[RMDB]
RNA sequence: GGGAACGACUCGAGUAGAGUCGAAAACAGGAAGUGCUUCCGUGGAGCCAUGCCUGGCUCAUAGUGCAGUACACCAUGGCCGUGCUGUGUCUGGUGCCCCUACGUACCCUUGCCCUUGCCCAGGUGCCUCUAGCAUCUGAUGACAGCCUGGGGAGCACGCAGCAUAACAAUUCGUUGUUAUGCUGCGAAAAGAAACAACAACAACAAC
Reactivity to 2A3 in 0.01 (KOAc 150mM, MgCl2 10mM, bicine 150mM(pH8.5), 24C), signal-to-noise 4, nucleotides 027 to 156: c060a010g100g050a090a040g030u040g060c010u110u000c050c030g030u080g090g010a020g000c000c000a090u180g040c050c120u060g030g000c010u000c020a040u110a020g080u110g060c090a020g030u030a010c020a010c060c030a050u140g040g000c020c020g100u080g050c060u060g020u040g030u090c030u010g040g000u030g000c020c010c000c010u040a030c060g060u090a070c010c010c000u030u090g060c050c000c010u030u140g070c020c010c020a010g000g010u020g020c010c030u140c060u060a070g040c020a130u070c050u080g030a070u090g040a030c050a050g030c010c020u040g020g000g000g000a010g020c020a000
Reactivity to DMS in 0.01 (KOAc 150mM, MgCl2 10mM, bicine 150mM(pH8.5), 24C), signal-to-noise 2, nucleotides 027 to 156: c060a110g030g010a080a060g020u000g000c000u000u000c010c070g050u000g050g010a120g020c000c010a110u000g020c120c040u010g000g030c040u070c020a060u000a050g020u000g010c010a170g020u000a300c040a050c050c020a010u000g010g050c030c050g010u010g040c050u020g040u000g010u020c030u050g000g000u000g010c000c000c020c040u000a080c130g030u000a150c000c000c050u000u010g010c040c030c040u000u000g010c020c020c040a030g010g030u020g000c000c070u000c140u000a070g010c030a030u000c010u000g000a060u010g020a020c020a100g010c050c030u000g000g000g010g030a170g010c010a240